An RNA of 177 nucleotides, treated with DMS and 2A3 and read out base by base. Source: RMDB libraries RFM100 and RFMREP, as collected in RNAgym. 2A3 adducts were read by reverse transcription with SuperScript II with manganese. For DMS the reverse transcriptase was MarathonRT. The reactions ran in a buffer of 150 mM KOAc, 10 mM MgCl2 and 150 mM bicine (pH 8.5), at 24 C.
RNA sequence: GGGAACGACUCGAGUAGAGUCGAAAAGGUUCGUCCAAAACGGAGUAACCCUUGAAGAAAGCAGGCAGGAUGAACCAAACAUCACUUCAAACUUAAACCAAGAAGUUGUUAAGGGGAAGAAUCAACAGAAGGUAAAAUGUUUCGACAUUUUACCUUCAAAAGAAACAACAACAACAAC
Reactivity to DMS in 0.01 (KOAc 150mM, MgCl2 10mM, bicine 150mM(pH8.5), 24C), signal-to-noise 6, nucleotides 027 to 126: g000g010u000u010c010g030u010c010c020a100a080a130a110c130g000g000a090g010u010a110a130c070c040c020u010u000g030a120a090g000a100a050a070g010c060a040g010g000c150a120g000g000a010u010g010a010a030c020c000a050a110a110c130a090u030c080a060c020u000u000c030a060a080a040c060u010u010a060a060a100c060c090a100a130g000a060a110g000u000u000g010u000u010a070a050g000g000g000g000a050a050g000a040a130u020c050a030a070c230a120
Reactivity to 2A3 in 0.01 (KOAc 150mM, MgCl2 10mM, bicine 150mM(pH8.5), 24C), signal-to-noise 3, nucleotides 027 to 126: g000g000u010u000c000g000u020c040c000a050a160a010a030c170g050g040a020g050u150a040a040c020c000c000u080u080g070a150a110g070a140a080a000g050c060a030g100g030c050a060g030g000a000u000g010a000a000c000c000a010a000a000c040a020u080c010a010c040u100u040c030a030a120a060c040u130u130a110a040a030c040c020a100a060g090a120a030g010u030u060g030u020u050a070a040g070g000g060g010a060a060g030a060a070u050c020a020a090c020a050